[RMDB]
RNA sequence: GGGAACGACUCGAGUAGAGUCGAAAAAUCACAAGUCAUUGCCAGCUCUGUUCAUUUUCUUCCCUGGUCUAACUCAAUAAUUGCCAUCAUGAAAAUUCUGGGUGACUUUUUGUGACUAAAGUCCCAUAAUGAUCUCAUAAUUCGUUAUGAGAUCAUUAAAAGAAACAACAACAACAAC
Reactivity to 2A3 in 0.01 (KOAc 150mM, MgCl2 10mM, bicine 150mM(pH8.5), 24C), signal-to-noise 9, nucleotides 027 to 126: a000u020c010a000c010a010a010g010u000c000a020u020u210g210c000c000a010g010c030u020c030u090g060u070u030c020a040u040u070u100u050c050u030u060c010c010c010u010g020g020u030c050u080a100a070c020u040c140a090a150u140a200a100u120u070g030c010c010a060u140c020a010u090g050a020a040a020a020u130u030c010u010g010g000g010u010g000a000c000u030u050u020u080u100g010u000g000a000c010u050a060a020a050g070u010c000c000c000a000u020
Reactivity to DMS in 0.01 (KOAc 150mM, MgCl2 10mM, bicine 150mM(pH8.5), 24C), signal-to-noise 7, nucleotides 027 to 126: a160u010c020a020c010a040a030g000u000c010a020u010u020g010c000c010a020g010c070u010c020u000g010u000u000c020a030u000u010u020u010c120u000u000c020c020c010u000g000g010u010c080u010a050a060c080u020c120a110a080u020a070a100u010u010g000c030c020a030u020c120a040u000g000a020a030a040a040u010u020c020u000g000g000g010u010g000a010c010u000u000u010u020u000g020u000g000a040c080u010a060a080a160g010u000c000c000c000a170u020
This 177-nucleotide RNA was probed chemically with 2A3 and DMS. The RNA was probed in 150 mM KOAc, 10 mM MgCl2 and 150 mM bicine (pH 8.5) at 24 C. Source: RMDB libraries RFM100 and RFMREP, as collected in RNAgym. DMS adducts were read by reverse transcription with MarathonRT.